[RMDB]
RNA sequence: GGGAACGACUCGAGUAGAGUCGAAAAUGGGAAUUAGUGGUAUCCUGAGUAAUACAUCACACGUGGAACGAUGUAUGAACCCGCGCGGACCACCGCGCAAGGCUAAAUACUAGUUGGCGACCGAUAGAGACUACCCAUCAUUCGUGAUGGGUAGUCUAAAAGAAACAACAACAACAAC
Reactivity to DMS in 0.01 (KOAc 150mM, MgCl2 10mM, bicine 150mM(pH8.5), 24C), signal-to-noise 2, nucleotides 027 to 126: u060g020g000g040a020a090u000u010a060g010u020g020g000u000a100u000c000c050u020g000a050g000u000a200a020u000a000c030a010u000c000a170c040a130c300g020u070g000g010a070a070c100g000a010u030g000u000a010u000g000a110a180c200c020c050g030c010g080c020g000g000a230c230c300a040c030c000g060c000g000c020a040a020g000g000c090u000a010a060a070u000a050c130u050a140g010u000u000g010g030c020g000a110c040c030g010a150u010a100g060
Reactivity to 2A3 in 0.01 (KOAc 150mM, MgCl2 10mM, bicine 150mM(pH8.5), 24C), signal-to-noise 1, nucleotides 027 to 126: u120g000g000g030a050a070u000u060a020g020u000g020g000u010a030u080c000c000u000g000a000g000u060a010a090u000a070c000a000u010c000a000c020a010c160g210u210g120g020a070a030c070g010a030u060g000u000a000u000g030a000a000c000c000c000g020c000g000c040g000g000a150c000c100a300c040c000g000c000g000c000a010a050g050g000c000u070a100a000a000u020a040c080u010a020g000u020u000g100g000c000g000a040c000c000g000a010u060a100g150
Description: This 177-nucleotide RNA was probed chemically with DMS and 2A3. 2A3 adducts were read by reverse transcription with SuperScript II with manganese. It was measured as part of the RMDB libraries RFM100 and RFMREP. Reactivities are given for positions 27 through 126. The reactions ran in a buffer of 150 mM KOAc, 10 mM MgCl2 and 150 mM bicine (pH 8.5), at 24 C.